The record gives the reactivity of an RNA of 177 nucleotides to 2A3 and DMS. The reactions ran in a buffer of 150 mM KOAc, 10 mM MgCl2 and 150 mM bicine (pH 8.5), at 24 C. 2A3 adducts were read by reverse transcription with SuperScript II with manganese. For 2A3, 4,986 sequencing reads were counted. It was measured as part of the RMDB library OK1LIB.
RNA sequence: GGGAACGACUCGAGUAGAGUCGAAAACAUUUGUUGGGCAAUUUAGCACACACUCUCCACAGCCUAUACACUUAUCUUUAUCUCUUACCACCUUAUUAUUUUCUGUUUUUAAUGCUCCAACAGAUAUAUUAUAUGCGUACUUCGGUACGCAUAUAAUAAAAGAAACAACAACAACAAC
Reactivity to 2A3 in 0.01 (KOAc 150mM, MgCl2 10mM, bicine 150mM(pH8.5), 24C), signal-to-noise 7, nucleotides 027 to 126: c030a030u050u040u070g020u020u000g020g010g020c050a100a120u090u070u100a170g030c010a010c000a000c000a010c060u040c000u000c040c010a030c020a050g040c020c000u070a090u080a070c040a020c030u100u040a050u110c050u020u170u080a170u060c030u010c000u050u090a070c030c030a050c040c020u090u060a080u120u030a110u040u190u020u030c020u020g100u030u040u020u020u140a120a090u090g020c020u030c070c000a010a000c000a020g020a000u050a020u000
Reactivity to DMS in 0.01 (KOAc 150mM, MgCl2 10mM, bicine 150mM(pH8.5), 24C), signal-to-noise 2, nucleotides 027 to 126: c100a060u000u010u000g010u010u000g000g000g020c020a130a030u010u010u020a110g000c020a100c060a110c010a020c010u000c020u010c010c000a050c110a070g010c080c010u000a050u000a100c090a080c020u030u010a070u020c030u040u010u000a030u010c050u000c010u000u010a120c010c010a030c050c040u000u020a040u010u010a060u010u010u000u000c030u000g010u010u020u010u000u040a030a170u000g020c010u010c010c020a040a000c030a020g000a030u010a130u000